[RMDB]
RNA sequence: GGGAACGACUCGAGUAGAGUCGAAAAUCGUCCUCGGCGGCACAAAACAGUUUCGCGGUGGCCAGGUUCGUCGCGAGCUCCCCAUUAGGGUCAUCUACGAGAAGCCUCAGUUUACGGAGACUAUAUGACCUCACCCUAAUUUCGAUUAGGGUGAGGUAAAAGAAACAACAACAACAAC
Reactivity to 2A3 in 0.01 (KOAc 150mM, MgCl2 10mM, bicine 150mM(pH8.5), 24C), signal-to-noise 1, nucleotides 027 to 126: u120c010g030u000c000c000u010c010g070g070c050g000g010c030a030c070a030a130a060a090c050a070g000u150u260u020c020g040c020g020g060u020g000g030c000c100a100g080g000u160u040c020g000u010c000g030c000g020a000g000c010u030c000c000c000c000a010u130u230a060g020g000g050u010c040a050u050c020u090a060c010g020a000g040a210a000g020c000c060u080c030a100g050u140u100u050a080c100g140g000a020g000a060c020u060a030u070a080u300g050
Reactivity to DMS in 0.01 (KOAc 150mM, MgCl2 10mM, bicine 150mM(pH8.5), 24C), signal-to-noise 2, nucleotides 027 to 126: u010c120g000u000c080c010u000c030g000g020c100g000g000c070a070c060a030a090a050a120c210a050g020u000u000u010c030g020c070g020g020u000g050g000c000c160a050g000g000u000u000c060g000u000c020g000c050g010a070g020c040u010c000c030c000c040a090u000u020a080g010g000g020u000c050a090u000c050u010a100c140g000a140g000a140a050g020c030c020u000c010a030g010u000u000u010a160c230g010g000a080g010a070c050u000a130u010a110u000g000